[RMDB]
RNA sequence: GGGAACGACUCGAGUAGAGUCGAAAAAAGUCAAAUUAUAGGUGAAAGUCCUUUAUGUCUCCAUGGCAUACCCUUUCCAAAUAGGACUUCAAGAUGCAACUUCUCCUAUCAUAGAAGAACUCCUCCAGCAGUAUUUAAUGUUCGCAUUAAAUACUGCAAAAGAAACAACAACAACAAC
Reactivity to DMS in 0.01 (KOAc 150mM, MgCl2 10mM, bicine 150mM(pH8.5), 24C), signal-to-noise 2, nucleotides 027 to 126: a070a110g000u010c050a070a080a060u000u000a040u010a070g000g000u000g010a120a070a100g010u000c030c010u000u010u000a030u000g000u000c020u020c200c270a120u020g010g020c020a030u010a030c060c010c010u000u000u030c080c030a030a090a100u000a040g010g010a010c040u010u000c090a050a080g010a060u000g000c120a070a080c060u000u000c020u000c000c020u000a020u000c050a090u000a130g010a070a070g010a150a140c140u000c010c010u010c100c090a120
Reactivity to 2A3 in 0.01 (KOAc 150mM, MgCl2 10mM, bicine 150mM(pH8.5), 24C), signal-to-noise 2, nucleotides 027 to 126: a010a000g040u030c040a130a000a040u150u070a090u100a080g000g050u060g080a200a000a000g030u000c000c000u000u080u020a030u030g020u000c030u010c190c090a170u260g000g000c010a000u020a060c000c040c010u060u180u060c080c030a040a090a060u080a050g050g000a010c000u060u000c110a090a040g000a080u180g040c040a110a070c010u050u060c000u020c000c000u020a020u090c060a040u070a090g120a110a000g040a080a100c040u000c020c050u040c030c000a000
Chemical mapping of a 177-nucleotide RNA with DMS and 2A3. It was measured as part of the RMDB library OK2TRN. DMS adducts were read by reverse transcription with MarathonRT. The reactions ran in a buffer of 150 mM KOAc, 10 mM MgCl2 and 150 mM bicine (pH 8.5), at 24 C. The DMS profile rests on 1,236 reads.